[RMDB]
The record gives the reactivity of an RNA of 177 nucleotides to DMS.
The RNA was probed in 150 mM KOAc, 10 mM MgCl2 and 150 mM bicine (pH 8.5) at 24 C.
The data come from the RNA Mapping Database (RMDB), library OK2TST.
For DMS the reverse transcriptase was MarathonRT.

RNA sequence: GGGAACGACUCGAGUAGAGUCGAAAAUGCAAAGACUUGAACAGUGAAGAGGCAAUUAGAGAUUUGUGUGGAGGAAACAGCUUGAUCAAUAUCCGGAAUACAUUACUAGAUGACUCCUGGGAGAAAAGAUGGGCCAUUUAUUCGUAAAUGGCCCAUCAAAAGAAACAACAACAACAAC
Reactivity to DMS in 0.01 (KOAc 150mM, MgCl2 10mM, bicine 150mM(pH8.5), 24C), signal-to-noise 1, nucleotides 027 to 126: u000g030c100a080a000a170g010a060c060u000u000g000a100a190c080a130g010u000g020a080a020g000a060g010g000c050a050a130u000u000a080g000a200g000a030u000u010u010g000u000g060u000g000g000a120g000g010a100a050a180c050a060g000c090u010u010g000a100u010c140a100a100u010a070u000c030c030g000g000a080a030u010a030c030a010u010u000a070c070u010a080g010a060u010g010a140c200u000c010c010u010g010g000g030a160g000a100a090a030a090